[RMDB]
Source: RMDB library OK2TRN, as collected in RNAgym.
Structure probing data (2A3 and DMS) for a 177-nucleotide construct.
For DMS the reverse transcriptase was MarathonRT.
Reactivities are given for positions 27 through 126.
For 2A3 the reverse transcriptase was SuperScript II with manganese.
RNA sequence: GGGAACGACUCGAGUAGAGUCGAAAAGGGACGAGCUGGAUCCAACCCGUGAGAACGGGUUGGAUCUAGCUCAAUGGCGUGUUGUUAGAAUUUCGGGGAGUGCUGAGUUCCGAAGAGUACGCCAUGACUACUGCUUAGUAUUCGUACUAGGUAGUAGAAAAGAAACAACAACAACAAC
Reactivity to 2A3 in 0.01 (KOAc 150mM, MgCl2 10mM, bicine 150mM(pH8.5), 24C), signal-to-noise 3, nucleotides 027 to 126: g050g000g020a020c040g000a010g000c000u000g000g000a000u000c000c000a000a000c000c000c000g000u010g050a110g020a030a010c010g000g000g000u010u000g000g000a000u000c000u000a000g000c000u000c000a000a000u000g000g000c000g000u010g000u000u030g070u020u020a030g020a060a070u070u050u040c020g000g000g000g030a210g050u200g020c080u070g040a050g030u050u000c010c000g010a020a010g010a010g050u010a010c000g000c010c000a010u040g020a010
Reactivity to DMS in 0.01 (KOAc 150mM, MgCl2 10mM, bicine 150mM(pH8.5), 24C), signal-to-noise 9, nucleotides 027 to 126: g010g010g010a150c170g010a010g010c000u000g000g010a010u000c000c000a000a000c000c000c000g020u000g000a250g000a230a010c000g010g000g010u000u000g000g000a000u000c000u000a000g010c000u000c000a020a020u000g010g010c010g020u000g000u000u000g000u000u000a100g000a070a070u000u000u000c020g010g010g010g010a120g020u010g000c060u000g000a080g010u000u000c010c030g010a040a060g000a080g010u000a010c010g010c000c000a020u000g000a290